[RMDB]
RNA sequence: GGGAACGACUCGAGUAGAGUCGAAAACUCCUCAAUCAGGUAAGAUGGUUAAGAGGGCCAGAGGAGUGGAGGCCAAAGAGGCUGAUGAUGCACAUUUGUUGUCUGAUUCACUUUCACAUGGGGCCCGCAUAGCGCGAUUUGUGACGAAAAACAUUCCCACACUUAGGCUAUUCGUAGCCUAAGUGUGAAAAGAAACAACAACAACAAC
Reactivity to 2A3 in 0.01 (KOAc 150mM, MgCl2 10mM, bicine 150mM(pH8.5), 24C), signal-to-noise 3, nucleotides 027 to 156: c030u040c020c000u030c030a080a140u030c020a030g090g010u130a120a060g040a100u080g020g040u120u140a080a060g040a050g060g050g000c030c030a040g010a020g000g020a040g020u020g000g040a020g000g030c000c050a080a090a010g140a030g010g010c100u030g020a060u050g020a010u040g030c060a030c040a140u100u120u140g110u050u050g030u070c050u010g030a080u000u060c040a030c070u060u170u080c070a060c010a140u070g010g010g100g000c060c060c000g000c020a040u180a050g040c060g010c020g080a080u080u100u110g030u080g030a060c060g090a140a000a000a010a000c010a060u050u040c010c000
Reactivity to DMS in 0.01 (KOAc 150mM, MgCl2 10mM, bicine 150mM(pH8.5), 24C), signal-to-noise 2, nucleotides 027 to 156: c050u000c010c020u000c060a080a070u010c060a150g030g010u000a100a130g000a140u010g010g000u010u000a040a070g010a040g040g030g030c020c030a110g010a070g030g030a060g080u000g000g000a160g020g000c040c050a090a050a120g000a100g030g030c060u040g020a080u000g000a130u010g010c040a060c100a170u000u000u000g020u010u000g000u000c030u000g030a260u000u000c040a090c050u000u000u000c020a070c060a080u000g020g000g000g000c020c010c040g020c130a050u000a100g040c030g030c040g020a150u000u000u000g050u000g010a120c090g000a040a040a070a080a100c110a260u000u000c010c020